RNA sequence: GGGAACGACUCGAGUAGAGUCGAAAACAUGCACGCCGCAGCCACGGGGUUGCCACAUUCUCCUGUGAGGCGAAAGUGUCUCUUACCCGGGGUGCCGAAGGUCACAUAAGUUGGCGUUGCGGAACCCUCUUGGGUGCGUCUUCGGGCGUACCCAAGAAAAAGAAACAACAACAACAAC
Reactivity to 2A3 in 0.01 (KOAc 150mM, MgCl2 10mM, bicine 150mM(pH8.5), 24C), signal-to-noise 5, nucleotides 027 to 126: c040a040u090g000c020a010c020g020c020c010g000c020a020g040c000c000a060c010g000g010g010g000u050u090g020c010c000a010c000a060u020u000c010u040c000c000u040g030u070g140a080g020g000c000g000a020a040a010g010u010g000u000c000u000c010u040u100a110c000c000c010g000g010g000g000u020g000c000c010g050a060a020g080g030u030c020a000c000a080u150a060a050g030u040u050g020g000c040g020u010u120g000c000g000g000a030a020c000c010c000
Reactivity to DMS in 0.01 (KOAc 150mM, MgCl2 10mM, bicine 150mM(pH8.5), 24C), signal-to-noise 5, nucleotides 027 to 126: c100a110u040g010c040a030c010g000c050c020g010c050a150g010c030c020a040c030g000g000g000g010u010u000g020c070c010a020c020a090u000u010c010u000c000c000u000g030u040g020a110g020g000c060g000a040a050a060g020u000g000u000c020u010c130u010u040a130c000c000c000g000g010g000g020u000g010c050c040g000a090a080g000g000u020c090a070c120a150u040a060a110g000u020u010g000g000c040g000u000u000g000c000g000g000a110a080c010c000c000
Chemical mapping of a 177-nucleotide RNA with 2A3 and DMS. Source: RMDB library OK1LIB, as collected in RNAgym. Values cover nucleotides 27 to 126.